[RMDB]
RNA sequence: GGGAACGACUCGAGUAGAGUCGAAAAGAAUGGGAAAGAGGAGGGCGGAAAAAGAGGAGCGGGCCUCCCGAUCCGAGGGGCCCGGUGGCCUGAUCUGGAGGGCACUCCGGGCCGUAGGGAAGAAAAGACGGGUGAAUCUUCGGAUUCACCAAAAGAAACAACAACAACAAC
Reactivity to DMS in 0.01 (KOAc 150mM, MgCl2 10mM, bicine 150mM(pH8.5), 24C), signal-to-noise 3, nucleotides 027 to 129: g040a080a030u050g030g040g000a070a040a070g000a080g040g020a030g000g000g000c070g000g000a040a040a050a080a070g000a060g030g000a090g050c100g030g000g040c030c030u010c030c030c050g000a100u030c020c040g030a140g010g010g000g010c030c000c000g000g000u020g010g010c000c000u000g020a130u040c160u060g020g010a220g010g030g000c040a100c060u020c010c000g000g000g010c020c020g010u030a010g000g000g000a060a040g020a030a020a020a020g020a090c220g010
Reactivity to 2A3 in 0.01 (KOAc 150mM, MgCl2 10mM, bicine 150mM(pH8.5), 24C), signal-to-noise 5, nucleotides 027 to 129: g020a020a060u170g010g000g020a060a100a060g010a040g040g020a050g000g000g000c050g010g060a060a080a020a010a000g060a030g030g010a020g040c070g000g050g020c000c010u040c000c000c010g050a070u040c030c000g020a030g030g030g010g000c000c000c010g000g000u010g010g000c000c020u050g020a110u080c050u070g110g040a040g070g010g010c060a120c090u010c000c000g010g000g000c000c000g000u030a010g000g010g000a010a020g000a030a060a000a000g060a010c090g020